RNA sequence: GGGAACGACUCGAGUAGAGUCGAAAAGCCACAUAUCCCGUGACAUUGCGAAAGCAAGGCUGGCGGUAGGUAGUCCUGGGCGGCGACAGCCUUGGACUCCGGCGUAAAGGUGUACCUGGGGCCGUUAUAACGCGGUAACAGUUCGCUGUUACCGCAACCUAGACAUCAGCUUCGGCUGAUGUCUAGGAAAAGAAACAACAACAACAAC
Reactivity to 2A3 in 0.01 (KOAc 150mM, MgCl2 10mM, bicine 150mM(pH8.5), 24C), signal-to-noise 2, nucleotides 027 to 156: g000c000c020a050c000a010u240a000u020c020c010c010g050u040g030a060c090a170u030u050g060c020g060a100a010a030g020c030a070a000g080g030c060u060g040g020c060g000g020u030a070g030g070u140a000g000u000c000c030u010g000g000g000c000g010g080c060g020a030c100a020g000c000c020u010u000g000g000a000c000u010c000c010g030g000c000g050u120a060a090a000g030g010u080g020u030a080c030c050u020g020g000g050g000c010c000g000u080u020a200u040a230a130c080g000c000g000g020u000a000a000c000a000g010u040u060c240g090c110u000g030u000u000a020c000c000g000c000a000a000